[RMDB]
An RNA of 177 nucleotides, treated with DMS and 2A3 and read out base by base. Values cover nucleotides 27 to 126. For 2A3 the reverse transcriptase was SuperScript II with manganese.
RNA sequence: GGGAACGACUCGAGUAGAGUCGAAAAAACCCCCCACACCUGAUCUAAACCACCUGGGGUUAUACACCUUGGACCAAGCUAAGAUGCAUUGCGGAGCUUGUGGGUACGGUUGGGCUUAGUCGAAGCACUCAUUUUUUGCAUUCGUGCAAAAAAUGAGAAAAGAAACAACAACAACAAC
Reactivity to DMS in 0.01 (KOAc 150mM, MgCl2 10mM, bicine 150mM(pH8.5), 24C), signal-to-noise 2, nucleotides 027 to 126: a050a050c030c020c020c010c000c010a110c150a130c030c020u000g030a040u000c010u000a060a140a180c050c030a080c060c000u020g000g000g000g000u000u010a050u020a080c070a060c000c020u010u000g000g000a300c110c100a000a010g000c030u000a130a040g010a100u020g010c080a110u030u000g000c000g010g000a040g010c030u000u020g000u020g000g040g000u010a090c180g030g000u000u000g000g010g080c150u010u040a030g000u000c070g020a140a120g030c130a110
Reactivity to 2A3 in 0.01 (KOAc 150mM, MgCl2 10mM, bicine 150mM(pH8.5), 24C), signal-to-noise 2, nucleotides 027 to 126: a000a000c010c000c000c000c010c000a030c020a030c010c000u030g020a010u040c030u140a220a030a030c000c010a010c000c000u050g020g000g000g000u050u060a070u010a040c090a050c010c010u000u010g020g020a030c000c060a020a000g000c000u070a100a050g040a100u130g020c050a120u080u280g020c020g040g030a000g000c020u030u010g020u100g060g000g010u020a020c060g030g000u010u010g020g010g000c010u070u140a120g040u120c080g130a090a020g010c010a000